RNA sequence: GGGAACGACUCGAGUAGAGUCGAAAAUGGGCGAUCGCUCGCUGUUUUUGUGGCUGGCUUUCAGCGGGCUGGAGGAGCCGGGAGCGGAGGCGGAGGACCGAGCCAAAAACGUCAGCCGAGGCCGCGCAAUAUCGUGGACUGUUCGCAGUCCACGAAACACACUGUCUUGAUUCGUCAAGACAGUGUGAAAAGAAACAACAACAACAAC
Reactivity to 2A3 in 0.01 (KOAc 150mM, MgCl2 10mM, bicine 150mM(pH8.5), 24C), signal-to-noise 3, nucleotides 027 to 156: u130g030g010g000c060g050a120u070c070g030c030u000c010g000c020u020g060u050u020u030u090u100g120u060g050g000c030u020g000g000c030u020u070u050c010a000g010c010g000g010g000c040u020g040g020a030g030g050a030g030c060c090g010g010g000a060g010c020g010g050a030g040g020c020g030g010a040g040g010a040c040c050g030a020g030c050c070a080a040a020a000a010c040g000u010c010a010g010c010c000g000a040g010g020c020c020g000c000g000c020a040a100u050a050u180c000g000u000g000g000a000c000u020g040u040u060c230g000c120a000g000u000c000c000a010c000g000a010a010a000